[RMDB]
RNA sequence: GGGAACGACUCGAGUAGAGUCGAAAAGCAGAAAUAAUAAGCAGCAUCAGCCAGAACAUCCCGCGUGCAAUUUUUCGCAGAUGCUCUUUGUCUGUAUUAAGAGAUUGUCUCUGGUUAAGAGUGUGAAUGAGGCACUACUGUUCGCAGUAGUGCCUCAAAAAGAAACAACAACAACAAC
Reactivity to DMS in 0.01 (KOAc 150mM, MgCl2 10mM, bicine 150mM(pH8.5), 24C), signal-to-noise 1, nucleotides 027 to 126: g000c050a090g010a090a030a110u010a060a070u000a080a200g040c120a050g050c020a020u000c030a100g000c000c090a000g030a080a200c060a080u000c040c020c010g010c230g020u000g000c090a080a060u000u020u000u010u000c170g000c040a070g010a000u000g010c090u000c050u010u000u020g010u010c000u000g010u000a140u000u010a040a050g020a030g010a160u000u000g000u020c060u000c000u010g000g020u020u010a050a100g000a020g010u010g010u000g030a090a160
Structure probing data (DMS) for a 177-nucleotide construct. Conditions: 150 mM KOAc, 10 mM MgCl2 and 150 mM bicine (pH 8.5), 24 C. The data come from the RNA Mapping Database (RMDB), library OK2TRN.